Structure probing data (DMS) for a 177-nucleotide construct. Conditions: 150 mM KOAc, 10 mM MgCl2 and 150 mM bicine (pH 8.5), 24 C.

[RMDB]
RNA sequence: GGGAACGACUCGAGUAGAGUCGAAAAUCGUUUAUGUGCGACAUGAACGAAGUGCAUCAUGUCCUACAUGAUGCAGAUGGCUUCUGUCGCACAGAAGCCAGAGCUAAUUUGUAGGACAAAUUAGCGAGGACAGCAUUGUAUUCGUACAAUGCUGUCCAAAAGAAACAACAACAACAAC
Reactivity to DMS in 0.01 (KOAc 150mM, MgCl2 10mM, bicine 150mM(pH8.5), 24C), signal-to-noise 3, nucleotides 027 to 126: u000c090g010u000u000u000a040u000g020u000g010c040g030a050c010a020u000g010a020a020c000g010a050a090g000u010g000c000a010u000c010a000u000g000u000c150c120u000a100c000a010u010g000a010u000g000c000a030g000a060u000g000g010c140u000u000c020u000g000u000c050g000c030a160c000a010g010a030a050g030c020c110a040g010a230g000c000u000a000a020u000u000u000g000u000a100g030g050a300c010a000a000a000u000u000a000g000c010g000a090